[RMDB]
RNA sequence: GGGAACGACUCGAGUAGAGUCGAAAAAGCCGCCGCAUGAUUUCGCAGAUGAGGAUCCGGCCCCGCAGGACGAGCACCUCACCGACGAGCAGCGCGAAGCCUACAAGGUAGCCGCCGAGUAGAGCGGCGUAGCGCUGCUAUUCGUAGCAGCGCUACGAAAAGAAACAACAACAACAAC
Reactivity to DMS in 0.01 (KOAc 150mM, MgCl2 10mM, bicine 150mM(pH8.5), 24C), signal-to-noise 6, nucleotides 027 to 126: a100g040c030c030g010c020c020g030c030a090u000g020a080u010u020u010c040g020c200a070g000a090u010g000a060g000g010a160u010c080c060g000g000c010c020c040c100g000c130a130g000g000a060c050g000a090g000c130a120c020c020u010c030a030c040c040g000a110c070g000a060g010c040a040g010c040g010c050g010a110a140g000c030c000u010a050c070a090a170g010g010u010a120g010c110c060g010c000c000g020a230g000u030a070g000a120g010c000g000g020
Reactivity to 2A3 in 0.01 (KOAc 150mM, MgCl2 10mM, bicine 150mM(pH8.5), 24C), signal-to-noise 7, nucleotides 027 to 126: a000g050c010c010g010c040c010g030c060a100u080g040a130u110u160u130c040g010c040a050g140a270u080g020a080g030g030a090u030c030c000g030g000c020c000c000c020g050c040a040g030g030a030c010g010a010g030c050a050c030c000u030c010a020c020c020g130a150c020g020a020g020c020a000g000c040g000c020g070a030a020g010c010c010u060a090c050a090a030g070g020u050a040g100c020c020g000c000c000g030a030g070u140a030g030a010g030c020g010g000